RNA sequence: GGGAACGACUCGAGUAGAGUCGAAAACCCUGGAACUUCGGUUCCAGGGCAUGGUGCAAAUCCCCCGCUGAUACGGAGCGAUAUCCGUCCCAAAAAUAUAAAAAGCUGAUGAUUUCGAUCAUCAGAAAGUCAUAUCAUCAUUCGUGAUGAUAUGACUAAAAGAAACAACAACAACAAC
Reactivity to DMS in 0.01 (KOAc 150mM, MgCl2 10mM, bicine 150mM(pH8.5), 24C), signal-to-noise 3, nucleotides 027 to 126: c000c000c000u000g010g010a020a010c000u010u010c230g030g000u000u000c010c000a000g010g010g010c020a020u000g030g000u000g000c260a070a160a090u000c010c000c000c020c000g010c010u000g010a140u010a030c010g000g000a010g020c030g010a030u000a020u000c000c000g010u000c050c030c040a030a070a100a110a080u010a040u020a080a070a070a110a110g000c010u010g000a000u000g000a020u000u000u010c170g020a030u000c000a000u000c000a000g010a030a060
Reactivity to 2A3 in 0.01 (KOAc 150mM, MgCl2 10mM, bicine 150mM(pH8.5), 24C), signal-to-noise 3, nucleotides 027 to 126: c000c000c010u000g010g000a010a000c010u040u090c210g100g000u000u000c000c010a000g000g010g000c010a060u120g060g040u130g060c050a040a070a230u110c010c000c000c000c000g000c000u020g030a040u020a090c000g000g000a010g010c010g020a010u010a000u010c000c010g020u050c000c010c000a090a130a010a060a000u200a030u140a100a210a030a020a020g050c000u000g000a000u000g000a000u030u060u100c170g040a010u000c000a000u000c000a000g020a020a010
The data come from the RNA Mapping Database (RMDB), library M2PK50.
The record gives the reactivity of an RNA of 177 nucleotides to DMS and 2A3.
For DMS the reverse transcriptase was MarathonRT.
The RNA was probed in 150 mM KOAc, 10 mM MgCl2 and 150 mM bicine (pH 8.5) at 24 C.
2A3 adducts were read by reverse transcription with SuperScript II with manganese.